RNA sequence: GGGAACGACUCGAGUAGAGUCGAAAAGACACGCUUGGCAGAUGACCUCCUCGUUGGUGUGUGUCGGUAAUGUUGUCAGUCACAGGCAACAGUUAACGAUCUGCGUAAAUAAAAAGAGAAGAACAAAACGUAUAGCUCACUUCGGUGAGCUAUACGUAAAAGAAACAACAACAACAAC
Reactivity to DMS in 0.01 (KOAc 150mM, MgCl2 10mM, bicine 150mM(pH8.5), 24C), signal-to-noise 2, nucleotides 027 to 126: g000a000c050a070c000g000c000u000u010g040g000c000a000g010a000u000g000a030c000c000u000c110c010u010c140g020u020u060g000g000u000g020u030g010u000g020u000c000g020g010u000a060a080u010g000u010u010g000u000c000a070g000u010c300a040c280a160g000g010c010a000a000c000a020g000u100u020a000a030c000g020a020u030c000u010g000c020g010u120a100a050a120u120a080a050a060a080a030g000a140g010a100a090g000a070a120c220a040a080a110
Reactivity to 2A3 in 0.01 (KOAc 150mM, MgCl2 10mM, bicine 150mM(pH8.5), 24C), signal-to-noise 3, nucleotides 027 to 126: g000a030c020a000c040g020c010u010u120g070g000c000a010g020a020u000g000a000c000c050u020c000c000u080c040g180u140u220g000g010u010g000u000g000u040g000u060c000g000g010u060a050a010u020g000u000u000g010u010c060a060g130u150c070a060c030a120g060g000c000a000a000c020a050g010u010u060a030a060c220g020a030u000c010u000g000c000g000u050a020a120a060u210a000a110a010a050a000g140a020g030a190a060g070a080a070c060a070a090a000

An RNA of 177 nucleotides, treated with DMS and 2A3 and read out base by base. The data come from the RNA Mapping Database (RMDB), library OK1LIB. The RNA was probed in 150 mM KOAc, 10 mM MgCl2 and 150 mM bicine (pH 8.5) at 24 C. 2A3 adducts were read by reverse transcription with SuperScript II with manganese.